Annotation:
This 207-nucleotide RNA was probed chemically with 2A3 and DMS. The DMS profile rests on 1,472 reads. For DMS the reverse transcriptase was MarathonRT. It was measured as part of the RMDB library OK3TST.
RNA sequence: GGGAACGACUCGAGUAGAGUCGAAAAACAACGCAAUUAACGACAUUAAAGGCUCAAUUAGAUGAUUGUAAUGAAAAGUUGGCGCAAAAUACCGCAUCCGGUAAUAAUUCUAGUGCCUUAAUAGAUACACUUAAUGCGCAAAUAACAACAUUAAACAUCGACCAUAACUUUUCGAAGUUAUGGUCGAAAAAGAAACAACAACAACAAC
Reactivity to 2A3 in 0.01 (KOAc 150mM, MgCl2 10mM, bicine 150mM(pH8.5), 24C), signal-to-noise 3, nucleotides 027 to 156: a000c050a020a010c040g010c030a020a020u100u040a120a040c050g100a020c040a030u090u160a100a090a000g030g000c020u010c060a070a170u140u080a050g050a130u090g000a030u040u170g040u100a100a090u150g050a130a000a000a020g050u050u060g060g010c000g000c000a000a040a030a080u040a000c020c000g030c050a080u070c110c000g000g000u040a030a030u090a090a020u080u030c040u120a020g040u010g010c000c000u000u010a020a000u040a040g050a020u090a090c070a000c100u040u090a050a030u060g000c000g000c000a160a000a000u130a070a020c090a050a030c010a030u120u250a080a050a030c060a040
Reactivity to DMS in 0.01 (KOAc 150mM, MgCl2 10mM, bicine 150mM(pH8.5), 24C), signal-to-noise 1, nucleotides 027 to 156: a110c040a050a070c050g010c030a000a140u010u030a040a090c030g010a180c110a030u010u000a080a020a190g000g020c040u000c030a050a230u000u010a060g000a090u030g010a140u000u020g030u010a000a140u000g000a120a090a040a230g050u030u000g000g000c000g000c000a040a130a090a120u010a020c010c010g000c070a230u000c080c060g060g030u000a040a060u030a120a130u010u000c040u020a060g000u000g020c010c070u010u000a010a030u010a050g000a150u000a050c090a050c050u010u000a010a090u000g000c030g000c010a130a040a110u000a110a230c000a020a110c060a060u010u000a040a070a050c130a230